The data come from the RNA Mapping Database (RMDB), library RNAMAK. This 207-nucleotide RNA was probed chemically with DMS and 2A3. The 2A3 profile rests on 3,962 reads. The RNA was probed in 150 mM KOAc, 10 mM MgCl2 and 150 mM bicine (pH 8.5) at 24 C. For DMS the reverse transcriptase was MarathonRT. For 2A3 the reverse transcriptase was SuperScript II with manganese.

RNA sequence: GGGAACGACUCGAGUAGAGUCGAAAAGUGCUCUUCGGAGCACAAAAAAUCCUAAGUCCACAACAGCCUCACUUGAGCAUCGAUCAUGGUCGGAAACGACCAUGGGAGCUCUUGGGAGGACAUGUGGAUAUGGAAAAAACGGCGUUUCGACGCCGAAACUUGCUAUAUUCUUCGGAAUAUAGCAAGUAAAAGAAACAACAACAACAAC
Reactivity to DMS in 0.01 (KOAc 150mM, MgCl2 10mM, bicine 150mM(pH8.5), 24C), signal-to-noise 1, nucleotides 027 to 156: g010u000g000c000u000c010u000u000c300g010g000a020g020c010a000c000a000a020a100a090a080a060u000c020c000u000a100a150g010u000c000c010a010c030a020a070c110a140g000c000c000u030c000a010c000u000u010g000a020g000c020a220u000c110g000a070u030c020a030u010g030g040u000c030g020g000a120a120a250c030g000a030c040c000a000u010g020g000g000a070g020c000u000c010u000u010g040g010g010a010g030g020a000c030a040u010g030u000g010g000a040u000a120u010g000g020a010a010a030a070a040a090c010g010g020c010g000u000u000u000c250g020a090c000g040c010c000g010a010a010
Reactivity to 2A3 in 0.01 (KOAc 150mM, MgCl2 10mM, bicine 150mM(pH8.5), 24C), signal-to-noise 3, nucleotides 027 to 156: g030u030g000c020u030c020u040u050c210g110g010a020g050c010a000c030a010a030a030a000a010a010u070c050c000u080a170a030g030u000c000c010a010c010a090a070c050a180g020c000c000u000c000a020c010u010u020g010a000g000c020a190u300c030g080a030u070c010a000u000g010g000u000c000g030g020a090a050a080c000g000a000c000c000a000u000g000g020g000a020g000c000u000c000u000u010g000g010g010a000g000g010a030c000a060u010g010u000g000g000a000u010a010u020g000g040a010a110a020a030a000a030c020g020g000c010g000u020u080u140c180g090a040c010g010c000c000g010a020a000